An RNA of 177 nucleotides, treated with DMS and 2A3 and read out base by base. It was measured as part of the RMDB library 15KREP. The DMS profile rests on 5,201 reads. For 2A3, 6,492 sequencing reads were counted. The RNA was probed in 150 mM KOAc, 10 mM MgCl2 and 150 mM bicine (pH 8.5) at 24 C.
RNA sequence: GGGAACGACUCGAGUAGAGUCGAAAAUCCCUCGCCUUCGAGCCGGGUCUUGCAUCGGGUUGGCUCAUCCUGAGACCGGGGAGCUUCGACGAUCUCUUGUCUCUCCUGAAGGAGGAAGGAGCUCUCGGUGUAGUAAAUUCUUCGGAAUUUACUACACAAAAGAAACAACAACAACAAC
Reactivity to DMS in 0.01 (KOAc 150mM, MgCl2 10mM, bicine 150mM(pH8.5), 24C), signal-to-noise 5, nucleotides 027 to 126: u000c000c000c010u010c240g010c020c020u010u010c090g000a070g020c050c030g010g010g010u000c050u000u010g040c130a110u000c070g000g010g000u020u000g020g010c020u000c030a110u000c070c070u010g000a090g010a060c040c040g010g000g020g010a020g010c110u000u000c060g010a110c130g000a100u000c040u000c030u010u010g000u000c020u010c100u000c040c040u010g010a110a090g010g010a070g010g010a100a110g010g010a030g010c060u000c030u000c040g010
Reactivity to 2A3 in 0.01 (KOAc 150mM, MgCl2 10mM, bicine 150mM(pH8.5), 24C), signal-to-noise 4, nucleotides 027 to 126: u010c000c010c010u010c030g020c010c010u050u080c050g020a020g010c010c010g080g020g050u020c060u070u140g050c030a090u060c040g070g070g070u020u060g040g000c010u010c010a040u080c010c030u090g030a040g030a070c010c020g020g000g020g000a010g000c010u040u040c040g080a090c020g050a100u030c020u010c000u090u090g090u020c020u020c010u020c030c030u090g100a130a060g020g010a000g020g000a040a060g030g020a000g010c000u000c000u010c030g040